An RNA of 177 nucleotides, treated with 2A3 and DMS and read out base by base.
The data come from the RNA Mapping Database (RMDB), libraries RFM100 and RFMREP.
For 2A3 the reverse transcriptase was SuperScript II with manganese.
RNA sequence: GGGAACGACUCGAGUAGAGUCGAAAACGUAGACCCCCAAAGUCCGUUUGUGCUACAACUGCAGAAGAGUUUCCCACAAUUCGAGAUUGUGGCUCAGCAGGUCACUCCGAAUGACCAUGCUAAUGCCCAGAAAGAUCACGUUCGCGUGAUCUUUCUGAAAAGAAACAACAACAACAAC
Reactivity to 2A3 in 0.01 (KOAc 150mM, MgCl2 10mM, bicine 150mM(pH8.5), 24C), signal-to-noise 4, nucleotides 027 to 126: c030g010u030a020g040a050c030c020c010c000c030a080a040a000g000u000c010c010g000u010u090u010g060u080g040c020u040a040c020a200a020c020u060g060c040a030g020a180a020g020a050g050u030u060u010c000c040c000a020c040a070a140u100u100c060g020a020g050a200u070u140g050u060g040g000c000u030c110a010g000c000a030g000g000u020c000a010c070u130c040c040g090a110a020u050g000a010c000c010a140u020g030c010u020a060a020u180g010c000c000
Reactivity to DMS in 0.01 (KOAc 150mM, MgCl2 10mM, bicine 150mM(pH8.5), 24C), signal-to-noise 4, nucleotides 027 to 126: c070g000u020a050g010a120c020c010c010c060c060a080a130a140g010u000c030c010g000u000u010u010g010u000g000c030u020a070c090a050a150c040u000g000c070a080g020a070a070g000a210g010u000u010u010c010c020c010a150c170a070a090u040u020c110g010a150g000a120u010u000g020u010g010g020c010u000c180a030g000c030a010g000g010u000c010a050c070u020c160c140g010a160a150u010g000a010c010c000a110u000g020c010u000a070a060u050g010c010c020